This 177-nucleotide RNA was probed chemically with 2A3 and DMS. For 2A3, 1,231 sequencing reads were counted. For DMS, 1,458 sequencing reads were counted. It was measured as part of the RMDB library OK2TST. The RNA was probed in 150 mM KOAc, 10 mM MgCl2 and 150 mM bicine (pH 8.5) at 24 C.
RNA sequence: GGGAACGACUCGAGUAGAGUCGAAAAGCAGGUAGAUCAAUGGAAUAGAAUUGAAGACCCAGAAAUGAACCCACAUACCUAUGGUCACUUGAUCUUUAACAAAGGAGCUAAAACUAUCCAGUGGGAAGGACCACUUAUAUUUCGAUAUAAGUGGUCCAAAAGAAACAACAACAACAAC
Reactivity to 2A3 in 0.01 (KOAc 150mM, MgCl2 10mM, bicine 150mM(pH8.5), 24C), signal-to-noise 2, nucleotides 027 to 126: g020c060a020g040g000u080a030g030a050u010c000a040a060u090g020g000a110a120u110a140g090a140a070u120u030g020a100a030g050a090c030c030c010a000g120a020a090a010u080g050a020a040c000c030c000a000c000a000u080a060c010c020u040a050u110g020g000u010c010a040c100u030u020g040a070u110c010u040u050u060a140a080c130a100a040a040g010g000a000g000c010u040a040a090a060a000c000u000a020u100c040c000a040g000u040g000g000g040a030a040
Reactivity to DMS in 0.01 (KOAc 150mM, MgCl2 10mM, bicine 150mM(pH8.5), 24C), signal-to-noise 2, nucleotides 027 to 126: g020c040a040g000g020u000a100g000a110u000c000a070a120u000g010g000a120a130u020a090g000a090a090u000u000g020a110a090g000a150c050c010c100a080g010a070a090a060u010g010a120a130c000c010c020a050c020a080u000a050c080c020u000a140u000g000g000u000c050a090c100u000u000g000a030u000c020u010u000u010a120a100c180a010a030a090g000g000a020g000c090u020a050a060a060a090c100u000a030u000c010c040a060g020u000g000g010g020a140a110